[RMDB]
RNA sequence: GGGAACGACUCGAGUAGAGUCGAAAACAUCGGUUUCGACCGAUGAAAAAGCGUACUACCAAUGGCCUAUGAAGUUAGCUACCCACCAGCUCCCAAAUAGGAGCUGAGGCUAAUGGAGGCUAAAUUGGUAUCGCAAAAAAGAUGGUUCGCCAUCUAACUAGGGUAAACAUUUCGAUGUUUACCCUAGAAAAGAAACAACAACAACAAC
Reactivity to DMS in 0.01 (KOAc 150mM, MgCl2 10mM, bicine 150mM(pH8.5), 24C), signal-to-noise 3, nucleotides 027 to 156: c030a020u000c010g020g030u000u000u000c260g030a050c020c000g000a000u000g000a040a050a050a140a180g020c010g010u000a070c090u000a060c000c020a030a060u010g060g000c000c000u000a300u020g020a280a300g020u000u000a030g010c010u000a050c010c010c030a300c130c010a010g020c000u000c000c010c010a060a140a160u020a040g010g050a050g020c000u000g000a020g010g010c030u000a010a020u000g040g020a040g040g020c000u000a010a020a050u010u000g010g010u000a030u000c000g000c010a000a040a070a090a030a080g000a020u000g000g010u010u010c150g000c000c010a040u000c010u000a030a140
Reactivity to 2A3 in 0.01 (KOAc 150mM, MgCl2 10mM, bicine 150mM(pH8.5), 24C), signal-to-noise 6, nucleotides 027 to 156: c000a010u000c000g000g040u100u150u110c210g120a040c010c020g000a000u020g110a130a020a000a000a000g030c050g030u080a120c060u000a000c020c000a010a040u040g030g000c030c000u300a300u300g050a040a010g000u020u010a000g000c020u060a120c040c040c040a050c020c010a010g000c000u040c000c030c020a150a300a070u220a110g000g010a010g000c000u000g000a010g000g000c000u000a000a000u020g000g010a000g000g010c000u070a130a100a080u000u000g000g010u000a010u170c060g000c010a050a050a060a010a000a050g020a010u020g000g030u050u090c240g070c080c000a000u000c000u000a060a090

This 207-nucleotide RNA was probed chemically with DMS and 2A3. For 2A3 the reverse transcriptase was SuperScript II with manganese. Conditions: 150 mM KOAc, 10 mM MgCl2 and 150 mM bicine (pH 8.5), 24 C.